[RMDB]
RNA sequence: GGGAACGACUCGAGUAGAGUCGAAAACUUAACUCGCCAGAUAAGAAAAGACCGAGAGGUUCAAGCUUAUAGGGCAGAAAGCGGGGGACAGCAGUACUAAACAUUCCCUGUGGCUGAGACGAAGGUAAAAAGGGUCAUAACUUCGGUUAUGACCCAACGUACAUUGUACCUUCGGGUACAAUGUACGAAAAGAAACAACAACAACAAC
Reactivity to 2A3 in 0.01 (KOAc 150mM, MgCl2 10mM, bicine 150mM(pH8.5), 24C), signal-to-noise 2, nucleotides 027 to 156: c010u100u050a040a040c010u020c060g000c000c000a010g030a100u050a040a000g040a020a100a040a020g020a030c020c020g050a030g010a030g110g010u070u080c120a050a000g000c000u030u010a000u020a080g060g000g010c020a020g130a070a070a010g020c030g040g000g000g000g020a020c010a000g050c010a020g060u110a060c060u150a040a100a020c030a030u020u000c030c000c000u040g030u050g020g030c070u030g000a000g010a030c070g070a070a040g000g040u150a070a040a050a020a010g000g010g000u010c000a000u000a000a000c000u030u080c230g060g000u000u000a000u000g000a000c000c000c000a000a000
Reactivity to DMS in 0.01 (KOAc 150mM, MgCl2 10mM, bicine 150mM(pH8.5), 24C), signal-to-noise 1, nucleotides 027 to 156: c010u000u020a110a120c030u000c050g110c010c020a100g030a060u000a050a040g000a110a070a300a300g000a050c000c020g070a200g000a240g020g000u000u000c040a150a230g000c060u030u010a060u000a120g050g050g030c060a030g010a130a040a040g010c040g000g010g010g070g000a050c040a030g010c060a080g020u010a200c050u010a040a050a050c060a110u010u000c040c000c010u000g050u010g030g000c000u000g000a120g000a060c050g000a050a070g000g010u000a010a060a060a100a170g030g020g050u000c000a020u000a010a020c000u010u000c270g030g000u000u000a000u000g000a060c020c000c000a000a000